[RMDB]
Structure probing data (2A3 and DMS) for a 177-nucleotide construct. The RNA was probed in 150 mM KOAc, 10 mM MgCl2 and 150 mM bicine (pH 8.5) at 24 C. It was measured as part of the RMDB library OK2TRN. DMS adducts were read by reverse transcription with MarathonRT.

RNA sequence: GGGAACGACUCGAGUAGAGUCGAAAAUGACUUAGAUAUUAACUGUGUAUUAACCAGUGUUAACUUCUUUAGGUAAUAACAGUAAGAUAACCUGGGUUAACCCUAUAGCGGUGCCAAUUCAGUGAAAAUCUCACACUAAGUUCGCUUAGUGUGAGAUAAAAGAAACAACAACAACAAC
Reactivity to 2A3 in 0.01 (KOAc 150mM, MgCl2 10mM, bicine 150mM(pH8.5), 24C), signal-to-noise 3, nucleotides 027 to 126: u050g020a000c010u050u050a000g020a060u100a070u090u120a140a020c010u020g000u010g050u060a020u050u070a100a050c010c010a020g020u030g020u250u100a060a060c020u130u100c000u120u170u130a050g000g010u110a030a040u010a040a020c010a000g020u040a110a020g020a040u020a010a010c010c010u020g010g030g020u020u050a060a050c020c000c020u080a080u080a190g070c120g030g000u030g040c060c000a050a060u090u070c020a030g020u030g120a030a020a020
Reactivity to DMS in 0.01 (KOAc 150mM, MgCl2 10mM, bicine 150mM(pH8.5), 24C), signal-to-noise 4, nucleotides 027 to 126: u020g010a040c060u010u010a070g010a100u010a060u000u000a110a080c020u000g000u000g010u020a060u000u000a070a110c030c000a050g010u010g010u000u010a070a120c100u000u000c050u000u000u010a070g010g010u000a060a040u000a020a030c090a020g010u010a050a080g000a090u000a030a070c080c010u000g010g000g010u000u010a050a110c010c030c030u000a100u010a110g020c070g030g010u000g000c050c050a040a090u000u000c060a080g000u000g000a050a050a070